The record gives the reactivity of an RNA of 177 nucleotides to DMS and 2A3.
For DMS the reverse transcriptase was MarathonRT.
The RNA was probed in 150 mM KOAc, 10 mM MgCl2 and 150 mM bicine (pH 8.5) at 24 C.

[RMDB]
RNA sequence: GGGAACGACUCGAGUAGAGUCGAAAAUAUGCUAACUUAAGUUCUAGGGAGACGGAAUUUCGUUACGUCGCUCAUUUAUCAAUAUUAUCAUCCUCACUACAUUGGUAAAUAAGCGAAUAAAGUAUCGCGACAUAGACAGAUUCGUCUGUCUAUGUCGAAAAGAAACAACAACAACAAC
Reactivity to DMS in 0.01 (KOAc 150mM, MgCl2 10mM, bicine 150mM(pH8.5), 24C), signal-to-noise 4, nucleotides 027 to 126: u010a080u010g010c110u010a040a090c070u000u010a060a110g020u010u000c020u010a110g010g010g010a050g000a070c100g000g010a070a050u010u000u010c190g010u010u000a020c090g010u000c010g000c000u010c010a030u020u000u000a000u000c010a020a010u000a080u010u020a110u020c150a090u010c050c030u010c070a070c200u000a070c160a030u000u000g010g000u000a000a000a010u010a040a010g010c010g010a010a080u020a070a090a080g040u000a050u000c050g010
Reactivity to 2A3 in 0.01 (KOAc 150mM, MgCl2 10mM, bicine 150mM(pH8.5), 24C), signal-to-noise 9, nucleotides 027 to 126: u240a060u100g050c040u040a040a050c020u120u110a070a030g030u050u010c020u100a080g070g050g020a070g020a030c030g030g040a060a060u040u050u090c030g020u020u020a030c040g010u010c000g000c000u000c010a010u000u000u000a010u000c010a010a000u030a080u210u170a080u120c070a070u070c040c080u120c040a100c060u160a070c040a100u000u010g000g000u000a000a000a000u010a020a000g000c010g030a010a030u120a060a090a010g050u040a040u090c050g000